The data come from the RNA Mapping Database (RMDB), library M2RFPK.
An RNA of 207 nucleotides, treated with DMS and 2A3 and read out base by base.
Values cover nucleotides 27 to 156.
The RNA was probed in 150 mM KOAc, 10 mM MgCl2 and 150 mM bicine (pH 8.5) at 24 C.
RNA sequence: GGGAACGACUCGAGUAGAGUCGAAAACAGACCUGAUGGGCCAUGUACCUAUCCAAAAUGAGAUCCCAUCUUGCACACUGUGCUAAUUUGAGAUUCUCAUGCCUCCUACUUGGAGAGAUCUGGACUACUAACUGUAUGACGUUCGCGUCAUACAGAAGAUAAUGUACUUCUUCGGAAGUACAUUAUCAAAAGAAACAACAACAACAAC
Reactivity to DMS in 0.01 (KOAc 150mM, MgCl2 10mM, bicine 150mM(pH8.5), 24C), signal-to-noise 4, nucleotides 027 to 156: c030a060g000a040c020c000u000g010a030u000g020g020g000c020c040a180u000g010u000a060c010c000u000a040u000c010c060a070a060a150a060u010g010a040g000a070u000c000c010c000a030u000c080u000u000g000c010a040c010a240c150u000g050u000g010c000u010a020a030u000u000u010g000a040g010a050u000u000c000u000c000a040u000g000c050c000u010c010c020u010a130c120u000u000g020g010a050g000a070g010a030u000c010u000g000g010a120c080u000a120c260u000a090a260c010u000g000u000a010u000g010a020c000g010u000u010c300g030c010g010u000c000a010u000a000c000a010g010a040a070
Reactivity to 2A3 in 0.01 (KOAc 150mM, MgCl2 10mM, bicine 150mM(pH8.5), 24C), signal-to-noise 9, nucleotides 027 to 156: c020a010g040a050c000c020u060g030a040u050g010g020g020c070c070a160u190g050u140a090c010c010u020a040u010c040c050a080a070a030a090u020g000a010g000a020u010c000c010c000a000u000c020u010u020g000c010a020c030a080c190u290g010u010g020c040u150a050a060u010u010u030g030a030g000a020u280u050c000u000c010a010u040g030c000c000u010c010c010u120a290c110u140u240g010g000a010g000a000g010a030u020c040u080g020g050a040c050u090a040c020u060a300a070c000u020g000u000a000u000g000a000c000g000u030u060c230g020c010g100u010c000a000u000a000c000a000g000a010a000